Conditions: 150 mM KOAc, 10 mM MgCl2 and 150 mM bicine (pH 8.5), 24 C.
Chemical mapping of a 177-nucleotide RNA with DMS and 2A3.
In probing experiments dimethyl sulfate is read out at A N1 and C N3, which are open when not base-paired.
It was measured as part of the RMDB library OK1LIB.
2A3 adducts were read by reverse transcription with SuperScript II with manganese.
For DMS, 25,413 sequencing reads were counted.
RNA sequence: GGGAACGACUCGAGUAGAGUCGAAAAAGCGCUGGAGAUGUACACGGGUUUGCCCCCGUAUCUGUGUACUAUCUCUUUUCAUACCCCUGGGAUAGGUUGAGUGGGGGCGGUCUGGGUUUGGCGCGAAGUGUAUUUAUAUAUUCGUAUAUAAAUACACAAAAGAAACAACAACAACAAC
Reactivity to DMS in 0.01 (KOAc 150mM, MgCl2 10mM, bicine 150mM(pH8.5), 24C), signal-to-noise 5, nucleotides 027 to 126: a120g000c030g010c020u000g000g000a050g000a050u010g000u000a020c010a020c000g000g000g000u000u010u040g010c020c000c010c010c000g010u020a030u010c020u010g010u000g000u030a040c000u040a010u000c000u000c000u010u010u040u030c100a120u020a240c030c010c010c040u000g000g000g000a100u010a050g000g010u010u010g000a090g020u020g010g010g010g000g020c030g000g000u000c030u010g000g000g010u010u010u010g000g000c010g000c020g010a060a110
Reactivity to 2A3 in 0.01 (KOAc 150mM, MgCl2 10mM, bicine 150mM(pH8.5), 24C), signal-to-noise 6, nucleotides 027 to 126: a000g050c060g000c030u050g040g010a080g020a090u070g030u080a010c030a020c020g020g000g020u020u070u280g030c000c000c000c000c010g010u040a190u020c010u020g080u020g040u080a020c010u020a020u010c000u000c000u080u050u030u030c040a050u100a090c000c000c000c030u030g020g000g020a050u050a080g100g030u110u130g040a050g030u140g000g010g000g000g000c010g000g010u000c020u010g000g000g030u030u060u100g020g000c020g000c030g030a080a040